[RMDB]
RNA sequence: GGGAACGACUCGAGUAGAGUCGAAAAGAAAAACAGGAAGAACCGUUGCUCUCAUACACCCCAUUGUAUUGGGUGGCUUGUUCUUUUAUACAUUGUGGGCAGGUCACUUAGGAUGUCCUCAAAGAAAGAUCACGCUGAUAUUCGUAUCAGCGUGAUCAAAAGAAACAACAACAACAAC
Reactivity to DMS in 0.01 (KOAc 150mM, MgCl2 10mM, bicine 150mM(pH8.5), 24C), signal-to-noise 2, nucleotides 027 to 126: g030a040a070a090a020a040c100a070g000g010a100a080g000a060a060c050c090g030u010u000g000c030u000c000u040c080a000u050a040c180a070c060c050c000c070a120u040u030g040u030a100u000u040g000g000g000u000g000g040c020u000u010g010u000u000c000u000u030u000u070a100u060a140c240a140u030u000g040u000g040g000g010c000a000g010g020u000c040a040c100u030u020a090g000g000a070u010g000u010c030c000u060c010a020a100a010g040a070a030a120
Reactivity to 2A3 in 0.01 (KOAc 150mM, MgCl2 10mM, bicine 150mM(pH8.5), 24C), signal-to-noise 3, nucleotides 027 to 126: g090a000a110a040a010a000c060a010g100g030a060a030g020a060a000c010c020g040u080u030g000c020u030c000u000c020a010u040a030c040a040c030c010c000c010a080u040u120g050u060a120u110u110g060g000g000u010g000g000c000u030u020g000u030u010c010u010u070u120u020a240u030a070c150a190u160u120g040u060g030g000g000c030a020g010g100u060c000a000c000u000u030a040g020g060a020u030g020u010c000c020u070c040a010a040a040g180a030a160a010